[RMDB]
RNA sequence: GGGAACGACUCGAGUAGAGUCGAAAAGCAAACGACGAAAACUACGCACUAGCAGCUUAAUAACCUGCUUAGAGCCCUCUCUCCCUAGCCUCCGCUCUUAGGACGGGGAUCAAGAGAGGUCAAACCUAAAAGAGCUCGUGUGGAAACCUUGCCUGGGGUUCAAUUACUCGUUCGCGAGUAAUUGAACAAAAGAAACAACAACAACAAC
Reactivity to 2A3 in 0.01 (KOAc 150mM, MgCl2 10mM, bicine 150mM(pH8.5), 24C), signal-to-noise 1, nucleotides 027 to 156: g050c020a050a130a040c040g090a010c080g130a090a040a090a080c080u170a050c050g010c070a010c040u000a010g000c000a000g030c000u090u000a050a020u000a050a020c010c010u010g000c010u020u080a020g010a040g040c000c020c000u000c000u000c010u000c010c000c000u010a010g010c000c000u010c020c010g000c030u030c010u050u040a000g010g000a110c000g020g010g000g010a000u060c090a010a050g000a000g000a000g000g000u000c000a100a080a080c030c050u130a070a010a000a010g000a000g030c020u100c080g050u090g020u040g000g050a070a180a080c010c000u030u050g030c000c060u050g000g000g020